The record gives the reactivity of an RNA of 207 nucleotides to 2A3. For 2A3 the reverse transcriptase was SuperScript II with manganese. Source: RMDB library M2RFPK, as collected in RNAgym.

RNA sequence: GGGAACGACUCGAGUAGAGUCGAAAAGGCUGCGUAUCACUCUAGGGUACGUGAUAGUGCGAUAUAAGAAGCACUGGUACAUGCCGGCAGGGACAGUUGAGAGAUGGCCGCAGUCUCGUGUCCCUGCAAAAGGAGUUCUCGUUCGCGAGAACUCCAAGGUCUUAUUGCGGUUCGCCGCAAUAAGACCAAAAGAAACAACAACAACAAC
Reactivity to 2A3 in 0.01 (KOAc 150mM, MgCl2 10mM, bicine 150mM(pH8.5), 24C), signal-to-noise 1, nucleotides 027 to 156: g010g010c020u040g000c040g000u050a010u000c040a100c180u200c130u140a060g000g000g060u000a020c040g020u040g030a040u160a090g020u020g010c040g030a010u010a000u080a300a070g150a090a020g010c010a000c000u030g010g010u150a070c040a040u200g000c040c000g000g010c000a000g000g000g010a000c020a050g040u180u170g180a040g010a000g000a210u030g070g040c070c060g000c060a010g080u000c000u000c000g020u030g000u000c020c000c000u010g000c000a000a000a000a000g020g000a000g000u010u000c010u010c020g010u030u100c230g040c020g110a000g000a000a020c000u000c000c000a000a030